[RMDB]
RNA sequence: GGGAACGACUCGAGUAGAGUCGAAAAUUAGAAGAUUGCUUGAGUGAGGAGUUGCGUAGAAUCGAUCCAGAUGAGAUCUAUGCUCAACUUGUUCACGCAGAUUGUUGCACAAUGCAAGAUAACGAACACGAUAUAAUGCGUUCGCGCAUUAUAUCGUAAAAGAAACAACAACAACAAC
Reactivity to DMS in 0.01 (KOAc 150mM, MgCl2 10mM, bicine 150mM(pH8.5), 24C), signal-to-noise 5, nucleotides 027 to 126: u010u010a100g000a090a120g010a110u000u000g010c020u000u000g010a110g000u000g000a030g020g010a190g010u000u010g010c060g010u000a010g020a060a070u010c100g010a110u000c100c110a180g000a120u010g000a170g000a050u000c010u000a050u000g000c020u000c060a030a100c010u000u000g010u010u010c010a000c040g010c040a020g010a130u000u000g010u000u010g020c030a140c120a070a110u000g010c030a030a040g010a110u000a060a080c090g010a080a100c200
Reactivity to 2A3 in 0.01 (KOAc 150mM, MgCl2 10mM, bicine 150mM(pH8.5), 24C), signal-to-noise 4, nucleotides 027 to 126: u100u070a050g040a110a020g100a080u080u080g020c000u030u050g040a030g010u010g010a020g010g000a030g020u040u020g020c020g000u020a010g010a070a100u080c050g030a020u000c030c060a110g090a300u110g050a150g000a110u010c000u030a030u030g000c000u010c010a000a020c000u030u000g050u040u030c010a010c030g000c000a010g110a140u050u220g140u100u060g000c040a020c030a140a120u150g010c010a030a050g040a160u120a130a060c110g000a040a020c080
Structure probing data (DMS and 2A3) for a 177-nucleotide construct. The reactions ran in a buffer of 150 mM KOAc, 10 mM MgCl2 and 150 mM bicine (pH 8.5), at 24 C. DMS adducts were read by reverse transcription with MarathonRT. Reactivities are given for positions 27 through 126.